The record gives the reactivity of an RNA of 177 nucleotides to DMS.
[RMDB]
RNA sequence: GGGAACGACUCGAGUAGAGUCGAAAAGAUAUGGAGUUGAUUCGCAAGCAAUGGGAGCAACAGCUAAUCUGGGUCGGAAACGACCCUUAGACAUGCUCCUGUUGCUUGCGAAUCAACUCCUAAGUCACCUAUUGUAAAAGUUCGCUUUUACAAUAGGAAAAGAAACAACAACAACAAC
Reactivity to DMS in 0.01 (KOAc 150mM, MgCl2 10mM, bicine 150mM(pH8.5), 24C), signal-to-noise 3, nucleotides 027 to 126: g000a030u010a300u000g000g020a010g020u000u000g000a010u000u000c010g030c010a010a010g000c000a010a010u000g000g010g010a020g000c010a030a090c300a200g000c020u000a010a110u010c300u010g020g030g010u000c000g000g010a100a110a200c000g000a000c000c000c020u000u000a020g000a030c080a220u000g000c000u000c000c010u000g000u000u000g000c000u000u000g000c000g000a000a010u010c000a000a000c000u000c000c000u010a000a060g000u000c030a220